About this RNA:
An RNA of 177 nucleotides, treated with 2A3 and DMS and read out base by base. For 2A3, 1,159 sequencing reads were counted. Source: RMDB library OK2TRN, as collected in RNAgym. 2A3 adducts were read by reverse transcription with SuperScript II with manganese. Conditions: 150 mM KOAc, 10 mM MgCl2 and 150 mM bicine (pH 8.5), 24 C.

[RMDB]
RNA sequence: GGGAACGACUCGAGUAGAGUCGAAAAUGGGGCAGAGAAUAAUGAGAGGGCAGCGAGGGAUGCGACUGCAGCUGCAGCUGUAGCUGCCGAAGCCCACGGGAAGCGGGGAGGAGCGAUCAUUGAGGCAGACCGAUAGCAAUUUCGAUUGCUAUCGGUCAAAAGAAACAACAACAACAAC
Reactivity to 2A3 in 0.01 (KOAc 150mM, MgCl2 10mM, bicine 150mM(pH8.5), 24C), signal-to-noise 1, nucleotides 027 to 126: u110g060g010g010g000c100a080g040a010g090a240a150u180a160a110u080g000a000g040a080g090g060g000c010a010g040c050g040a080g020g100g020a030u100g000c020g010a050c050u030g000c010a020g000c020u120g010c010a070g060c050u210g000u030a000g010c010u010g000c000c000g000a030a010g000c000c020c000a010c030g030g000g000a060a010g080c050g030g030g000g000a050g040g000a060g020c020g000a060u090c000a060u050u160g020a020g000g070c030a010
Reactivity to DMS in 0.01 (KOAc 150mM, MgCl2 10mM, bicine 150mM(pH8.5), 24C), signal-to-noise 1, nucleotides 027 to 126: u000g000g000g020g000c080a110g000a100g010a110a120u010a060a050u000g000a120g000a150g000g010g030c040a060g020c080g000a150g000g000g020a050u010g010c010g010a170c030u000g000c000a050g040c030u000g000c070a120g020c130u010g010u000a050g000c000u000g020c000c090g010a040a220g010c010c030c020a090c090g000g000g010a050a030g000c090g000g000g000g000a070g000g000a120g000c050g000a030u000c050a050u000u000g000a160g000g010c110a140